[RMDB]
Annotation
An RNA of 177 nucleotides, treated with DMS and 2A3 and read out base by base. 2A3 adducts were read by reverse transcription with SuperScript II with manganese. The data come from the RNA Mapping Database (RMDB), library TTRDES.

RNA sequence: GGGAACGACUCGAGUAGAGUCGAAAAGAUAUGGACCCUAUACCAGCAACAGCGUGGAUCGGAAACGAUCCACGACAUGCUGUGUAUGAGGGUCCUAAGUCAAAAGUAACUUGUUCGCAAGUUACAACUCUUUAAUUGUCUUCGGACAAUUAAAGAGAAAAGAAACAACAACAACAAC
Reactivity to DMS in 0.01 (KOAc 150mM, MgCl2 10mM, bicine 150mM(pH8.5), 24C), signal-to-noise 4, nucleotides 027 to 126: g000a060u000a300u000g000g020a000c000c000c000u000a080u000a010c000c000a020g010c000a040a070c300a240g010c010g020u010g000g010a010u010c000g010g010a120a120a200c000g010a010u010c000c000a000c000g010a010c080a180u000g010c000u000g000u010g020u000a010u000g020a010g000g010g020u000c000c000u010a010a060g010u000c040a070a110a130a150g000u000a010a010c000u000u000g010u000u010c270g020c010a010a010g000u000u000a000c010a130a130
Reactivity to 2A3 in 0.01 (KOAc 150mM, MgCl2 10mM, bicine 150mM(pH8.5), 24C), signal-to-noise 3, nucleotides 027 to 126: g040a020u090a070u160g000g000a000c000c000c000u020a000u000a000c000c000a010g010c010a020a150c020a270g100c010g020u000g010g010a010u000c000g000g060a040a080a070c020g000a010u010c000c020a000c010g010a010c000a000u050g000c000u000g070u040g020u090a010u100g300a070g010g000g000u000c000c000u010a000a010g000u000c030a050a000a040a000g000u010a010a010c020u020u020g030u100u130c290g020c190a020a000g000u000u000a000c000a010a040
For DMS the reverse transcriptase was MarathonRT.